[RMDB]
RNA sequence: GGGAACGACUCGAGUAGAGUCGAAAAUUGUACACACCGCCCGUCGUUAUCUAAGAUGGUGCUAUGUUCGAAGAGGGUUUUCCUUCUGAGGACGUAGGAUUAGAUUGGAUACAAGUCGUAACAAGGUCCGCAUGGACAUUUUCGAAUGUCCAUGCGGAAAAGAAACAACAACAACAAC
Reactivity to 2A3 in 0.01 (KOAc 150mM, MgCl2 10mM, bicine 150mM(pH8.5), 24C), signal-to-noise 2, nucleotides 027 to 126: u120u000g080u100a070c010a000c010a020c010c030g060c000c020c000g080u090c010g080u130u050a020u000c050u030a000a030g000a040u040g000g010u040g110c000u000a000u000g000u000u010c000g000a020a000g000a010g050g020g000u040u090u100u300c000c000u020u030c000u000g010a060g000g000a000c000g000u000a000g000g020a000u000u000a010g000a000u000u030g050g000a000u000a030c050a170a090g080u070c060g050u020a000a150c060a040a000g120g040u000